[RMDB]
Conditions: 150 mM KOAc, 10 mM MgCl2 and 150 mM bicine (pH 8.5), 24 C. Structure probing data (2A3 and DMS) for a 177-nucleotide construct. 2A3 adducts were read by reverse transcription with SuperScript II with manganese. For DMS, 1,468 sequencing reads were counted. Source: RMDB library 15KREP, as collected in RNAgym.
RNA sequence: GGGAACGACUCGAGUAGAGUCGAAAACAGUACGUUAUCUUCUGUCAAACAGCAGAUACGGCACAUGCUAACAACAUUAACAGAUUUAAUGUUGCAAUCACUCGUGCCCAAAAAGGUAUUCUUUGUGCCCAUAAAACAUCUUCGGAUGUUUUAUGGGAAAAGAAACAACAACAACAAC
Reactivity to 2A3 in 0.01 (KOAc 150mM, MgCl2 10mM, bicine 150mM(pH8.5), 24C), signal-to-noise 4, nucleotides 027 to 126: c020a010g090u150a000c050g060u120u070a010u000c000u040u000c000u030g060u090c080a170a140a120c010a110g010c000a000g010a030u010a040c030g000g020c020a020c000a040u080g010c010u040a090a030c010a010a000c000a000u010u000a020a010c030a160g210a300u010u050u050a000a000u010g010u000u010g000c020a020a050u040c010a020c060u090c060g010u020g000c010c000c040a000a060a000a020a020g220g010u150a160u040u020c020u060u040u050g140u160g170
Reactivity to DMS in 0.01 (KOAc 150mM, MgCl2 10mM, bicine 150mM(pH8.5), 24C), signal-to-noise 3, nucleotides 027 to 126: c100a050g010u010a040c090g000u010u000a010u000c020u000u010c000u010g010u010c230a120a090a300c030a020g020c100a020g010a030u010a040c060g000g000c070a040c050a090u000g000c050u000a160a260c010a000a000c000a010u000u000a000a060c210a260g000a160u020u000u000a010a000u000g000u010u000g010c100a040a150u010c090a040c150u000c110g020u000g020c000c030c130a070a050a030a080a090g000g000u010a040u000u000c040u000u000u000g020u000g030